[RMDB]
RNA sequence: GGGAACGACUCGAGUAGAGUCGAAAACCAGUGGAGCCAUGGGAUGCUCCUCCCGAUUCCGUCCAACCCCUUCCCCCGAGGGUCGCCCAGGAAUGGCGGGACCCACUCGACUGGGGUCCGCGUUCCAAACCCACGCAGUUCGCUGCGUGGAAAAGAAACAACAACAACAAC
Reactivity to DMS in 0.01 (KOAc 150mM, MgCl2 10mM, bicine 150mM(pH8.5), 24C), signal-to-noise 3, nucleotides 027 to 129: c000c000a130g010u030g000g000a050g040c060c080a200u060g000g000g000a030u000g030c040u020c060c030u030c000c030c000g030a140u050u020c060c040g020u050c080c000a030a130c070c030c000c080u030u020c010c020c010c020c050g030a100g020g030g020u000c000g000c030c000c030a090g040g000a000a020u030g130g000c000g010g050g020a000c050c010c000a000c030u050c190g040a130c170u040g000g000g040g030u000c010c000g030c060g000u010u030c010c020a060a050a040c040
Reactivity to 2A3 in 0.01 (KOAc 150mM, MgCl2 10mM, bicine 150mM(pH8.5), 24C), signal-to-noise 9, nucleotides 027 to 129: c000c000a010g040u060g040g040a030g040c040c060a190u110g040g050g060a080u120g040c010u010c000c010u010c020c000c000g070a070u120u020c020c010g040u040c040c020a080a070c030c000c000c000u020u040c010c010c000c000c000g010a040g010g010g020u030c040g020c000c000c000a030g010g060a010a010u060g300g080c010g000g020g010a000c000c020c000a040c040u170c070g190a200c110u040g000g000g000g000u000c010c000g010c000g010u010u000c000c000a020a000a030c020